[RMDB]
The record gives the reactivity of an RNA of 177 nucleotides to DMS and 2A3.

RNA sequence: GGGAACGACUCGAGUAGAGUCGAAAACAUGACGAUCGGAGCAGUAAGGGCGUAUGACAGUGCAUGAUCCUUCCUCGUUGGGAAUUGUGGCGUGUCCGGGUGGUGAGGUGUUCGCCCGUGAGAUCGUCUAUAAAUCAGGUUUCGACCUGAUUUAUAGAAAAGAAACAACAACAACAAC
Reactivity to DMS in 0.01 (KOAc 150mM, MgCl2 10mM, bicine 150mM(pH8.5), 24C), signal-to-noise 9, nucleotides 027 to 126: c130a090u010g010a030c010g010a020u000c010g010g010a190g020c090a140g010u010a120a140g000g010g010c020g010u000a080u010g010a090c140a070g020u010g010c030a040u000g000a070u000c030c030u000u000c020c020u000c240g010u010u010g000g010g000a040a090u000u000g020u010g010g010c050g020u000g010u000c070c060g000g000g020u010g000g010u000g000a100g010g010u010g000u010u000c040g010c000c000c010g000u000g000a210g000a030u000c020g010u000
Reactivity to 2A3 in 0.01 (KOAc 150mM, MgCl2 10mM, bicine 150mM(pH8.5), 24C), signal-to-noise 6, nucleotides 027 to 126: c060a090u170g050a000c010g010a020u020c030g060g070a070g080c070a030g070u170a120a170g040g010g000c030g010u090a070u180g100a050c030a030g060u030g080c010a020u040g030a110u060c000c010u040u050c010c010u090c060g210u160u250g020g000g020a070a090u100u040g070u100g090g020c070g030u030g020u030c030c070g040g000g020u200g020g050u110g030a070g030g000u060g040u060u030c020g000c000c000c020g010u060g010a050g000a030u040c010g000u000
The DMS profile rests on 47,032 reads. The RNA was probed in 150 mM KOAc, 10 mM MgCl2 and 150 mM bicine (pH 8.5) at 24 C. The data come from the RNA Mapping Database (RMDB), library OK2TST.